RNA sequence: GGGAACGACUCGAGUAGAGUCGAAAAGAAGAGAAUAGCGGUGUAAGUGCAGCCCGUCUUACACCGUAAGGCACAGCGGAAACGCUGAUGUUAAAUACAGGGCUGGGAGACGGAAGUAGACCGUCAAAUCAUAAUUUUACUUCGGUAAAAUUAUGAUAAAAGAAACAACAACAACAAC
Reactivity to 2A3 in 0.01 (KOAc 150mM, MgCl2 10mM, bicine 150mM(pH8.5), 24C), signal-to-noise 9, nucleotides 027 to 126: g120a040a010g090a000g070a080a130u140a110g010c000g000g000u000g000u000a010a010g010u030g080c020a000g000c000c000c000g000u000c000u000u000a000c000a000c000c000g000u030a020a050g050g000c000a000c000a010g000c010g030g020a070a070a010c010g000c000u000g000a060u010g000u010u080a080a090a020u220a060c090a060g010g000g000c010u010g010g050g010a140g000a000c010g020g010a140a080g100u200a040g080a110c000c000g020u000c010a020a070
Reactivity to DMS in 0.01 (KOAc 150mM, MgCl2 10mM, bicine 150mM(pH8.5), 24C), signal-to-noise 6, nucleotides 027 to 126: g000a130a080g000a140g010a110a090u040a260g010c000g000g000u000g020u000a000a000g010u000g010c020a020g010c000c000c000g010u020c010u010u000a000c000a000c020c000g010u000a010a050g000g010c020a030c010a000g010c010g010g000a130a100a160c010g000c000u000g000a060u010g000u010u000a090a080a120u040a060c130a140g000g000g000c010u000g000g000g000a150g000a010c010g000g010a110a120g020u030a100g000a100c010c010g000u000c010a030a070